An RNA of 177 nucleotides, treated with 2A3 and DMS and read out base by base.
The reactions ran in a buffer of 150 mM KOAc, 10 mM MgCl2 and 150 mM bicine (pH 8.5), at 24 C.
[RMDB]
RNA sequence: GGGAACGACUCGAGUAGAGUCGAAAAAGGCUGCAACUCGCCUGCAUGAAGCCGGAAUCGCUAGUAAUCGCAGGUCAGCUAUACUGCGGUGAAUGUGUUCCUGAGCCUUGUACACACCGCCCGUCAAUUCACAGUCUUGAUUCGUCAAGACUGUGAAAAAAGAAACAACAACAACAAC
Reactivity to 2A3 in 0.01 (KOAc 150mM, MgCl2 10mM, bicine 150mM(pH8.5), 24C), signal-to-noise 6, nucleotides 027 to 126: a000g040g000c020u040g010c040a060a040c030u030c090g010c000c020u010g000c020a050u090g110a080a010g030c020c000g020g010a040a020u190c050g000c000u000a010g000u000a030a000u010c010g000c000a000g010g030u090c050a020g030c030u070a060u110a250c010u010g000c000g010g010u010g020a030a030u040g020u000g010u010u010c010c000u010g020a010g000c000c010u050u060g040u090a010c040a000c000a000c040c030g030c010c020c010g060u060c030a030a060
Reactivity to DMS in 0.01 (KOAc 150mM, MgCl2 10mM, bicine 150mM(pH8.5), 24C), signal-to-noise 5, nucleotides 027 to 126: a040g010g020c020u000g010c090a040a070c070u010c070g000c040c010u010g000c060a060u020g010a130a080g020c100c060g000g020a120a040u010c040g000c030u000a040g010u000a050a010u000c010g000c010a020g010g000u030c130a090g010c110u020a060u020a050c000u000g000c000g000g020u000g000a120a090u000g020u000g010u010u000c010c000u010g010a120g000c030c020u000u000g030u010a070c090a090c070a070c040c050g000c020c010c030g000u010c120a070a140

For 2A3 the reverse transcriptase was SuperScript II with manganese.